[RMDB]
RNA sequence: GGGAACGACUCGAGUAGAGUCGAAAAGUGCUGUAAAGCACGGUGCCUAGCACCUCACAGGGACUCGGGGUGUCCUGGCUGACCAGCCGAAUCCACUUUUUAUUGACAAGAAGCCUGGGUCCCAGAGAACACGCAACUUCUUCGGAAGUUGCGUGUUAAAAGAAACAACAACAACAAC
Reactivity to DMS in 0.01 (KOAc 150mM, MgCl2 10mM, bicine 150mM(pH8.5), 24C), signal-to-noise 1, nucleotides 027 to 126: g030u000g020c020u010g000u030a070a160a040g030c000a000c020g000g010u000g020c000c020u000a080g000c070a090c060c010u020c050a070c160a110g000g000g010a040c010u000c000g000g000g010g000u010g020u020c130c150u000g000g000c010u000g000a110c300c150a110g030c010c010g000a130a090u000c060c110a160c030u000u010u000u010u000a250u020u030g020a120c090a040a100g020a080a100g020c090c030u000g000g000g000u000c000c000c000a050g000a190g010